The record gives the reactivity of an RNA of 177 nucleotides to DMS and 2A3. The data come from the RNA Mapping Database (RMDB), library OK1LIB. The reactions ran in a buffer of 150 mM KOAc, 10 mM MgCl2 and 150 mM bicine (pH 8.5), at 24 C.
[RMDB]
RNA sequence: GGGAACGACUCGAGUAGAGUCGAAAACAGAUAGCGACUCAGACAGCGAUUCAGAUUCGGAUAGCGAUUCAGAUUCAGAUGCAGGUAAACAUACUCCGACUAAACCAAUGAGUACGGUUAAAGAUCAGUCUGGUGGAUUAUUCGUAAUCCACCAGACAAAAGAAACAACAACAACAAC
Reactivity to DMS in 0.01 (KOAc 150mM, MgCl2 10mM, bicine 150mM(pH8.5), 24C), signal-to-noise 2, nucleotides 027 to 126: c020a110g010a130u000a090g070c040g000a000c050u020c060a080g000a010c170a030g070c090g000a040u000u000c000a140g050a130u000u000c070g010g040a110u000a170g010c000g000a050u000u000c100a040g000a070u010u000c080a060g000a070u060g020c000a050g020g040u000a040a070a070c090a080u000a060c060u030c030c070g000a070c090u020a030a080a160c080c090a040a030u040g000a050g030u020a090c100g000g000u000u010a000a040a080g000a070u010c100a050
Reactivity to 2A3 in 0.01 (KOAc 150mM, MgCl2 10mM, bicine 150mM(pH8.5), 24C), signal-to-noise 3, nucleotides 027 to 126: c020a030g100a020u100a000g100c040g040a050c010u020c020a020g050a170c040a010g050c020g050a000u060u020c020a000g130a200u160u130c010g020g020a030u050a040g060c020g020a020u050u080c060a030g050a120u010u010c010a000g020a060u070g020c000a050g000g070u140a120a090a000c000a080u050a060c020u010c050c020g030a020c020u120a050a040a080c010c050a050a170u140g050a040g110u080a120c030g030g010u050u040a080a100a000g140a090u150c010a060